[RMDB]
RNA sequence: GGGAACGACUCGAGUAGAGUCGAAAACUAACGUUGCAUGGAGUCUAUGUCUGGACCUCCUCCAUUUGCUCUUUCAAGAGAAUGUGAGAAUUUCGAGAUUCGGACAUAGCCUUCAUGCAUGCUAGAGUUUCCUCAACAAGUUCGCUUGUUGAGGAAAAAAAGAAACAACAACAACAAC
Reactivity to 2A3 in 0.01 (KOAc 150mM, MgCl2 10mM, bicine 150mM(pH8.5), 24C), signal-to-noise 7, nucleotides 027 to 126: c000u010a010a020c030g100u040u030g000c000a000u010g000g010a010g000u000c000u000a000u000g000u000c000u010g010g000a010c010c010u010c010c000u000c010c010a020u020u020u250g160c010u020c000u040u300u130c140a160a010g010a010g010a000a010u020g070u180g020a010g040a150a240u180u170u240c080g010a010g010a020u000u000c000g000g000a000c000a000u000a000g000c000c000u000u010c000a000u010g000c000a000u000g000c010u060a030g000a030g110
Reactivity to DMS in 0.01 (KOAc 150mM, MgCl2 10mM, bicine 150mM(pH8.5), 24C), signal-to-noise 3, nucleotides 027 to 126: c000u000a040a020c030g020u000u000g020c000a000u000g000g000a000g010u000c010u020a000u000g000u000c010u000g020g000a000c040c000u000c000c000u000c000c000a030u020u000u040g020c000u000c010u000u050u040c300a120a030g030a000g000a070a000u000g000u090g000a020g000a190a160u030u010u080c300g010a010g000a050u000u000c000g000g000a020c010a010u000a000g010c050c000u000u020c000a000u000g020c000a000u000g000c090u000a010g000a230g020